[RMDB]
RNA sequence: GGGAACGACUCGAGUAGAGUCGAAAAAAUGCUUAUUACUCCAUUUUCUUUUAACAUUUCUAAACUUAACUUUAUAGCCUUUAAAGUUGUAUCUGGUUUGGUUAUAAUUGAAUGUUUCGCUCUUGGACAUUAGCGUAAUAUUCGUAUUACGCUAAUGAAAAGAAACAACAACAACAAC
Reactivity to DMS in 0.01 (KOAc 150mM, MgCl2 10mM, bicine 150mM(pH8.5), 24C), signal-to-noise 3, nucleotides 027 to 126: a060a060u020g010c060u010u000a050u010u010a070c070u010c050c050a120u010u000u000u010c010u000u010u010u000a040a060c070a040u000u020u000c030u000a030a070a060c080u010u010a050a050c020u000u010u000a000u030a110g030c030c040u010u020u010a040a060a070g000u000u010g010u000a070u020c070u020g000g020u000u020u010g000g020u000u000a050u010a050a060u010u000g000a070a050u010g010u000u010u000c100g000c180u010c100u010u020g000g010a240
Reactivity to 2A3 in 0.01 (KOAc 150mM, MgCl2 10mM, bicine 150mM(pH8.5), 24C), signal-to-noise 9, nucleotides 027 to 126: a000a000u170g070c110u120u150a150u140u110a240c050u040c040c020a050u070u050u040u060c040u040u090u050u080a080a040c030a070u090u130u060c060u090a130a120a230c040u110u120a040a040c000u000u100u030a040u070a050g040c020c010u120u120u170a050a120a050g030u080u080g100u120a150u060c090u070g050g040u050u070u030g030g010u030u050a070u040a110a090u080u090g050a060a020u030g030u010u020u020c070g030c060u060c060u140u090g030g030a000